[RMDB]
RNA sequence: GGGAACGACUCGAGUAGAGUCGAAAACAAGUAGGAAAUACAGGGUAAGCGUAAGGGGCUACAUUGUGAAGGUUGGUGACCUACCGUGAUGAACUGAAAAAGAUUCAAAGUAGCGGUUUGAGCGAUGCUCCUGUAGGCAGUUCGCUGCCUACAGGAGAAAAGAAACAACAACAACAAC
Reactivity to 2A3 in 0.01 (KOAc 150mM, MgCl2 10mM, bicine 150mM(pH8.5), 24C), signal-to-noise 2, nucleotides 027 to 126: c030a010a050g130u080a050g020g150a070a030a050u070a080c050a030g000g000g030u060a040a010g040c000g020u070a040a090g030g000g010g020c030u100a040c020a070u120u110g030u020g060a020a030g050g010u020u030g040g020u080g030a020c020c020u000a000c000c010g000u000g030a090u020g010a000a010c010u030g040a120a000a000a060a020g070a100u030u030c050a050a050a060g000u010a010g010c030g020g000u020u070u080g060a040g000c010g020a030u020g010
Reactivity to DMS in 0.01 (KOAc 150mM, MgCl2 10mM, bicine 150mM(pH8.5), 24C), signal-to-noise 3, nucleotides 027 to 126: c080a090a060g030u000a060g010g030a040a180a080u020a080c080a080g010g000g000u030a060a060g010c160g000u000a110a050g020g010g000g030c070u000a050c120a060u010u000g040u010g010a050a030g030g010u000u000g010g010u010g000a080c040c020u000a020c030c040g000u040g030a080u010g000a020a070c050u000g040a010a050a150a070a040g000a160u000u030c010a020a020a100g020u010a100g010c020g000g010u000u030u000g000a060g010c060g030a120u010g010
Chemical mapping of a 177-nucleotide RNA with 2A3 and DMS. DMS (dimethyl sulfate) methylates the pairing face of unpaired adenines and cytosines. For 2A3 the reverse transcriptase was SuperScript II with manganese. The RNA was probed in 150 mM KOAc, 10 mM MgCl2 and 150 mM bicine (pH 8.5) at 24 C. For DMS the reverse transcriptase was MarathonRT.